[RMDB]
RNA sequence: GGGAACGACUCGAGUAGAGUCGAAAAGGAAAUAAUGCACAUAAUCCAGUCGCAGACGCUAAAAAUAUCGCUGCGUCGCGACGGAUGUGGCAACGCACACCGAAGUGCAAACGGUAGCGUAAAAAAAGGUAUAGACCCAGUUCGCUGGGUCUAUACCAAAAGAAACAACAACAACAAC
Reactivity to DMS in 0.01 (KOAc 150mM, MgCl2 10mM, bicine 150mM(pH8.5), 24C), signal-to-noise 1, nucleotides 027 to 126: g080g000a050a160a090u000a060a140u020g080c000a110c000a020u000a060a070u000c030c000a140g000u030c020g010c010a090g000a020c000g000c050u010a010a060a190a150a090u000a210u010c240g000c150u010g000c000g020u000c000g000c000g050a000c020g000g000a000u000g060u000g000g020c070a080a010c060g040c010a010c230a040c000c000g010a020a060g010u010g000c220a070a080a060c010g010g000u000a050g020c000g000u030a000a010a060a030a040a020a040
Reactivity to 2A3 in 0.01 (KOAc 150mM, MgCl2 10mM, bicine 150mM(pH8.5), 24C), signal-to-noise 2, nucleotides 027 to 126: g060g020a010a050a100u200a030a130u180g080c050a040c010a280u240a260a110u130c010c010a090g010u000c020g020c060a070g000a000c020g040c020u130a070a130a000a040a130u300a080u140c100g010c120u050g000c000g020u020c000g000c000g000a000c000g000g000a000u010g000u000g020g000c020a020a000c000g040c010a060c000a000c080c030g000a090a040g240u160g190c000a090a030a000c040g030g000u020a000g000c000g040u120a030a060a000a000a000a000a060